[RMDB]
RNA sequence: GGGAACGACUCGAGUAGAGUCGAAAAGGGGCGUGCAGGACGGGUACAUCGCGUUCCGUGGCGACGCCGAUAUCCACGUUGAAGUGUCCACGGACAUGGGCAACAACUACGGCAUAGCCUCCGGCGGGCACAGUGUCGAGUUCGCUCGACACUGUGCAAAAGAAACAACAACAACAAC
Reactivity to 2A3 in 0.01 (KOAc 150mM, MgCl2 10mM, bicine 150mM(pH8.5), 24C), signal-to-noise 1, nucleotides 027 to 126: g010g020g000g040c030g020u000g030c030a000g010g080a030c030g040g020g030u080a050c040a130u110c120g030c050g090u140u060c030c010g070u040g050g000c030g020a020c000g070c000c030g020a010u030a030u000c040c030a070c080g010u040u060g110a140a020g020u000g000u030c000c000a000c060g120g030a060c030a060u080g010g000g000c000a040a000c000a060a000c040u040a060c060g020g000c000a040u030a200g030c020c030u040c010c000g120g010c080g020g050
Reactivity to DMS in 0.01 (KOAc 150mM, MgCl2 10mM, bicine 150mM(pH8.5), 24C), signal-to-noise 2, nucleotides 027 to 126: g050g000g000g020c000g030u000g050c040a090g000g000a120c100g000g050g000u000a120c130a100u000c130g030c060g000u000u000c020c030g030u000g000g000c090g010a060c060g000c060c050g000a130u000a060u010c040c110a140c200g000u000u000g000a090a130g000u030g020u000c000c010a050c060g000g000a110c270a170u000g000g000g000c040a060a080c110a050a060c030u000a210c050g020g020c030a050u000a260g000c000c000u000c030c040g000g000c020g020g000